[RMDB]
RNA sequence: GGGAACGACUCGAGUAGAGUCGAAAACGAUAAAGGAAGCCGCCCCGCAGGCGGUUAUCGGAUCGAACUUAAGCAUUUUUCGGAAGAACGCCGUUACCUUGGCAUGCCACGCGACCUUCACGCAGUACCUUUCCUAACGAUUCGUCGUUAGGAAAGGAAAAGAAACAACAACAACAAC
Reactivity to DMS in 0.01 (KOAc 150mM, MgCl2 10mM, bicine 150mM(pH8.5), 24C), signal-to-noise 2, nucleotides 027 to 126: c040g000a070u010a030a110a130g000g000a100a240g000c000c000g030c020c010c060c220g010c180a170g010g010c020g020g000u000u000a030u030c020g000g000a050u000c020g010a090a100c070u000u000a060a110g010c110a100u000u000u010u000u000c050g030g000a100a040g000a080a070c150g000c020c020g000u010u010a050c090c060u000u000g010g030c060a070u010g000c020c030a050c090g000c030g000a050c050c010u000u000c060a030c070g000c070a110g000u000a110
Reactivity to 2A3 in 0.01 (KOAc 150mM, MgCl2 10mM, bicine 150mM(pH8.5), 24C), signal-to-noise 2, nucleotides 027 to 126: c030g000a040u090a100a130a030g130g010a020a030g020c000c000g000c010c000c010c060g150c120a070g010g010c000g000g010u020u010a110u020c000g000g040a030u020c010g020a040a060c020u130u200a110a030g050c030a140u050u010u000u080u170c040g000g020a050a060g020a110a030c050g000c040c000g030u040u060a070c020c010u020u070g000g000c040a040u090g020c000c020a040c040g030c010g020a090c010c020u120u080c060a070c060g030c020a000g070u050a060